[RMDB]
RNA sequence: GGGAACGACUCGAGUAGAGUCGAAAAGAAAGAAGAAAGGACCUCGGCGAUUCGCUUACGCGAAUAAAUCGUCAGUCUCGAGUGAGGUCCAAAAACGAGACUGAUAAAAAGAAAAAGAAAAAGAAAACCACUGAGGAUUAUUCGUAAUCCUCAGUGGAAAAGAAACAACAACAACAAC
Reactivity to 2A3 in 0.01 (KOAc 150mM, MgCl2 10mM, bicine 150mM(pH8.5), 24C), signal-to-noise 1, nucleotides 027 to 126: g100a010a210a010g040a170a000g060a090a110a030g000g000a000c000c000u030c000g090g000c020g110a030u000u000c000g060c000u200u220a180c090g000c000g000a030a000u080a080a100a020u160c090g010u020c000a000g020u000c000u000c000g030a070g050u090g000a050g000g000u000c000c000a200a000a000a000a000c000g000a000g000a000c000u020g000a000u110a030a050a000a010a020g160a020a160a060a000a000g110a000a190a060a000a000g070a090a130a000a000